[RMDB]
RNA sequence: GGGAACGACUCGAGUAGAGUCGAAAAUUGUUCUACAAAAGACAAAUAUGCGUUGAUGCUCUAUACACAGGCAGAUGCACUCAAACGAAAGAUCGUAGCUGGGAGUCAGAGCGCGUUCACGACAGUACAGUGUUCUAACCUUCGGGUUAGAACACUGAAAAGAAACAACAACAACAAC
Reactivity to DMS in 0.01 (KOAc 150mM, MgCl2 10mM, bicine 150mM(pH8.5), 24C), signal-to-noise 1, nucleotides 027 to 126: u000u010g020u000u000c100u030a180c160a090a090a110a040g000a020c100a110a050a070u020a100u000g030c050g010u000u000g000a130u050g000c000u020c030u010a130u000a070c150a170c060a100g000g010c080a040g000a050u000g020c030a000c140u000c040a060a020a040c150g000a020a100a110g000a040u020c050g010u000a060g000c050u000g000g000g000a030g000u030c050a060g000a050g020c050g050c070g010u000u000c110a060c040g000a050c140a080g000u010a180
Reactivity to 2A3 in 0.01 (KOAc 150mM, MgCl2 10mM, bicine 150mM(pH8.5), 24C), signal-to-noise 1, nucleotides 027 to 126: u010u060g020u070u050c000u010a180c000a030a110a040a000g030a010c070a030a160a040u200a100u220g040c040g040u040u020g130a060u040g060c000u000c010u050a140u090a080c080a000c020a050g000g110c010a020g050a110u150g000c080a010c040u010c020a030a190a030c010g080a110a040a150g060a050u040c030g000u100a060g030c000u010g110g000g030a110g090u080c020a020g000a000g070c020g000c000g000u010u020c020a050c080g090a080c000a010g030u060a040
Source: RMDB library OK2TST, as collected in RNAgym.
An RNA of 177 nucleotides, treated with DMS and 2A3 and read out base by base.
The 2A3 profile rests on 629 reads.
Values are in units of 0.01, from 0 to 300, in steps of 10.
Values cover nucleotides 27 to 126.
For DMS, 610 sequencing reads were counted.
For DMS the reverse transcriptase was MarathonRT.